[RMDB]
RNA sequence: GGGAACGACUCGAGUAGAGUCGAAAAGCGAGUACACGCAGUAUAGUGCCACUUGUGUGAGAAUACUUUUAGUACAAGCGAGUACACGCAGUAUACUGCCACUUGUGUGAGAAUACUUUUAGUACAAUCAUAUAGUGCGGUUCGCCGCACUAUAUGAAAAAGAAACAACAACAACAAC
Reactivity to 2A3 in 0.01 (KOAc 150mM, MgCl2 10mM, bicine 150mM(pH8.5), 24C), signal-to-noise 9, nucleotides 027 to 126: g030c010g000a000g030u150a030c050a010c070g000c010a000g000u010a010u010a020g210u000g010c010c010a020c010u020u020g010u010g020u070g080a140g100a130a040u090a100c030u060u130u160u240a070g020u020a010c030a050a050g020c000g030a020g020u070a020c060a010c070g000c000a000g020u000a000u000a000c000u020g010c010c010a010c000u040u030g000u010g030u080g100a070g100a080a070u120a150c050u050u100u120u100a060g040u070a060c060a050a060
Reactivity to DMS in 0.01 (KOAc 150mM, MgCl2 10mM, bicine 150mM(pH8.5), 24C), signal-to-noise 5, nucleotides 027 to 126: g020c030g000a020g020u010a030c090a170c300g000c010a040g030u000a010u000a020g000u000g000c030c140a030c000u000u000g000u020g020u020g000a080g010a110a150u000a000c050u000u000u020u030a060g010u000a030c030a090a290g010c040g010a060g000u020a050c120a140c300g010c060a020g010u010a020u000a020c000u000g000c000c100a040c020u000u010g020u000g000u020g000a080g030a070a060u010a030c030u010u000u000u010a100g020u020a060c150a090a300
Source: RMDB library OK1LIB, as collected in RNAgym. Chemical mapping of a 177-nucleotide RNA with 2A3 and DMS. The RNA was probed in 150 mM KOAc, 10 mM MgCl2 and 150 mM bicine (pH 8.5) at 24 C. Values cover nucleotides 27 to 126. The 2A3 profile rests on 8,923 reads.